Source: RMDB library M2PK50, as collected in RNAgym.
Structure probing data (DMS and 2A3) for a 177-nucleotide construct.
The 2A3 profile rests on 1,277 reads.
For 2A3 the reverse transcriptase was SuperScript II with manganese.
Values cover nucleotides 27 to 126.
The reactions ran in a buffer of 150 mM KOAc, 10 mM MgCl2 and 150 mM bicine (pH 8.5), at 24 C.
RNA sequence: GGGAACGACUCGAGUAGAGUCGAAAACAUCGCGACUUCGGUCGCGAUGAAAGUUGUGCUCGCUCACGCAUAACAAAUCCCAAUGAGGGUAGGUGACUGCAAAACGACACGCCUUCGGGCGUGUCAAACCUGGAAACUGAUUCGUCAGUUUCCAGGUAAAAGAAACAACAACAACAAC
Reactivity to DMS in 0.01 (KOAc 150mM, MgCl2 10mM, bicine 150mM(pH8.5), 24C), signal-to-noise 2, nucleotides 027 to 126: c000a000u000c000g030c000g000a010c010u010u030c150g030g030u000c000g020c000g000a010u010g000a030a050a110g020u000u000g010u020g000c000u000c080g000c070u000c080a110c170g010c000a020u000a010a010c010a060a120a100u000c010c000c000a110a120u000g000a070g020g000g020u000a030g020g000u010g010a100c070u020g030c090a060a080a090a110c190g020a020c000a000c000g000c010c000u000u000c250g030g010g040c000g070u000g000u000c010a010a020
Reactivity to 2A3 in 0.01 (KOAc 150mM, MgCl2 10mM, bicine 150mM(pH8.5), 24C), signal-to-noise 1, nucleotides 027 to 126: c000a000u000c010g000c000g000a010c000u030u070c270g110g000u030c010g020c000g020a000u000g000a000a010a000g030u010u010g000u000g020c000u060c100g010c010u060c040a010c030g000c000a020u000a040a020c020a030a110a020u000c000c000c000a020a040u200g060a080g050g060g010u060a030g000g040u020g040a050c060u050g000c090a050a050a040a050c140g000a000c000a000c010g000c020c000u030u030c140g090g000g000c000g020u030g000u000c000a020a000